[RMDB]
RNA sequence: GGGAACGACUCGAGUAGAGUCGAAAAGAUAUGGAGUAUGGGACUUUUGACGAGCUGUAUAUCGGAAACGAUAUACGCUCGAUAAGUCCGCAUACUCCUAAGUCAAAAGCACUCCUUCGGGAGUGCAGAGGAAUACUGAGUUCGCUCAGUAUUCCUCAAAAGAAACAACAACAACAAC
Reactivity to 2A3 in 0.01 (KOAc 150mM, MgCl2 10mM, bicine 150mM(pH8.5), 24C), signal-to-noise 2, nucleotides 027 to 126: g020a010u070a030u160g000g000a000g010u000a010u010g020g000g010a020c010u180u100u160u220g290a210c070g000a000g030c150u200g180u010a010u000a000u010c020g000g010a070a060a010c000g010a000u000a000u000a010c000g010c000u000c000g010a000u000a010a000g000u010c000c010g020c010a010u010a000c000u000c000c000u000a020a000g010u010c010a090a000a080a030g000c000a010c010u020c010c000u030u160c300g160g000g000a000g000u000g000c000a010
Reactivity to DMS in 0.01 (KOAc 150mM, MgCl2 10mM, bicine 150mM(pH8.5), 24C), signal-to-noise 3, nucleotides 027 to 126: g000a080u000a300u000g000g010a000g020u010a010u000g010g010g020a010c000u000u000u000u000g010a290c160g010a010g010c000u020g030u000a000u000a000u000c000g000g010a150a080a210c000g010a010u000a010u000a000c000g010c000u000c000g010a050u000a010a000g000u000c000c000g010c010a000u000a000c000u000c000c000u000a020a090g010u000c040a080a130a130a130g010c000a000c000u000c000c000u000u010c210g020g000g010a020g030u000g010c000a010